[RMDB]
RNA sequence: GGGAACGACUCGAGUAGAGUCGAAAAUGAUCGAGAGAUCUAACGAUGUACGCGAGUCAACGGCACAGACUCGAGCGAAAGCUCGGUCGAAAGACCGCGUACAUCGGUCGGCAAGUGUCUAGUCAAACAUCAUUAUCGGUUUCGACCGAUAAUGAUGAAAAGAAACAACAACAACAAC
Reactivity to DMS in 0.01 (KOAc 150mM, MgCl2 10mM, bicine 150mM(pH8.5), 24C), signal-to-noise 7, nucleotides 027 to 126: u000g010a010u000c000g010a250g000a250g000a020u000c010u000a090a080c010g010a010u000g010u000a000c000g020c000g010a050g000u000c000a040a140c180g000g000c050a040c070a260g000a010c010u010c010g000a010g000c000g010a110a100a170g010c000u000c000g010g000u000c010g000a100a090a140g000a010c000c000g010c000g020u000a000c010a000u000c000g000g010u000c110g000g000c050a090a150g010u000g000u000c010u000a180g000u000c050a100a090a200
Reactivity to 2A3 in 0.01 (KOAc 150mM, MgCl2 10mM, bicine 150mM(pH8.5), 24C), signal-to-noise 2, nucleotides 027 to 126: u110g000a010u020c020g000a000g000a010g000a090u020c030u030a050a030c010g000a000u020g000u010a000c000g010c010g020a030g020u000c020a040a140c080g050g020c020a020c010a080g020a010c020u040c150g000a000g000c010g050a110a010a010g000c000u010c000g000g020u010c000g000a030a000a000g000a000c000c000g000c000g000u020a000c000a000u000c000g000g000u040c040g010g050c040a130a100g040u020g010u060c010u040a040g070u050c050a080a050a060